[RMDB]
RNA sequence: GGGAACGACUCGAGUAGAGUCGAAAAUCUUGUACACGUAAGAAUAUUAAUCGUAGUAGUAUCCUGAGUACCACGGAGCACGUGAAAUUCUGUGGGAAUCUGUCAGAACCAUCUGAUAAGGCUAAAUAAGUAGUAUUGAAUUCGUUCAAUACUACUUAAAAGAAACAACAACAACAAC
Reactivity to DMS in 0.01 (KOAc 150mM, MgCl2 10mM, bicine 150mM(pH8.5), 24C), signal-to-noise 9, nucleotides 027 to 126: u010c040u010u010g020u010a090c050a040c050g000u020a090a060g010a090a080u030a090u010u020a080a080u010c050g030u010a070g020u000a040g010u000a070u010c030c020u000g010a070g010u010a170c020c000a010c020g000g010a030g010c150a070c120g010u020g000a070a070a090u010u000c010u000g020u000g000g000g000a090a080u010c040u000g010u000c010a010g010a070a180c220c220a080u010c010u000g010a020u010a040a070g020g010c130u000a040a060a100u000
Reactivity to 2A3 in 0.01 (KOAc 150mM, MgCl2 10mM, bicine 150mM(pH8.5), 24C), signal-to-noise 9, nucleotides 027 to 126: u030c020u060u150g070u090a020c030a010c040g050u080a060a060g100a190a080u180a080u250u230a100a070u120c040g020u030a120g020u000a020g020u020a110u070c010c010u030g030a010g020u030a030c000c000a000c010g010g010a020g020c060a030c190g130u160g110a040a040a040u060u000c000u000g000u010g000g000g040a010a040u020c030u030g020u000c000a000g010a080a140c070c010a180u050c010u000g010a010u030a140a070g070g000c050u060a060a050a060u060
An RNA of 177 nucleotides, treated with DMS and 2A3 and read out base by base. 2A3 adducts were read by reverse transcription with SuperScript II with manganese. DMS adducts were read by reverse transcription with MarathonRT.